This 177-nucleotide RNA was probed chemically with 2A3 and DMS. DMS adducts were read by reverse transcription with MarathonRT. DMS (dimethyl sulfate) methylates the pairing face of unpaired adenines and cytosines. It was measured as part of the RMDB library RFM100.
RNA sequence: GGGAACGACUCGAGUAGAGUCGAAAAGAACAGGACCGGCUUCCCUCGUCGCUGAGGCAGGACCGACUUCCCUCAUGGCCGAGGCAGGACCGGCUUUGCUCAUGGCCGAGGCAGGACCGGCUUCGAACAGGUCCGAAUGAUUCGUCAUUCGGACCUGAAAAGAAACAACAACAACAAC
Reactivity to 2A3 in 0.01 (KOAc 150mM, MgCl2 10mM, bicine 150mM(pH8.5), 24C), signal-to-noise 2, nucleotides 027 to 126: g000a050a030c050a050g000g100a040c020c000g000g020c050u030u050c040c030c060u010c050g060u030c020g000c130u100g020a080g020g000c020a030g010g040a040c000c000g030a010c000u000u010c070c000c000u000c010a030u110g290g010c030c080g000a000g000g010c040a020g050g070a120c070c030g000g040c060u110u020u000g010c030u030c050a050u070g010g000c000c050g000a000g000g000c020a080g010g000a090c000c000g020g000c030u000u060c040g030a080a030
Reactivity to DMS in 0.01 (KOAc 150mM, MgCl2 10mM, bicine 150mM(pH8.5), 24C), signal-to-noise 1, nucleotides 027 to 126: g000a050a060c080a110g000g000a030c000c000g000g080c070u000u000c300c000c040u030c020g000u000c030g090c020u090g000a200g000g070c230a010g000g000a080c040c040g000a080c090u000u010c260c000c000u000c070a050u000g000g000c300c170g040a050g000g030c210a000g030g000a050c150c000g000g000c000u010u000u000g000c020u000c070a060u000g000g000c240c020g090a000g000g040c250a040g000g010a080c000c000g000g000c020u040u000c000g010a020a180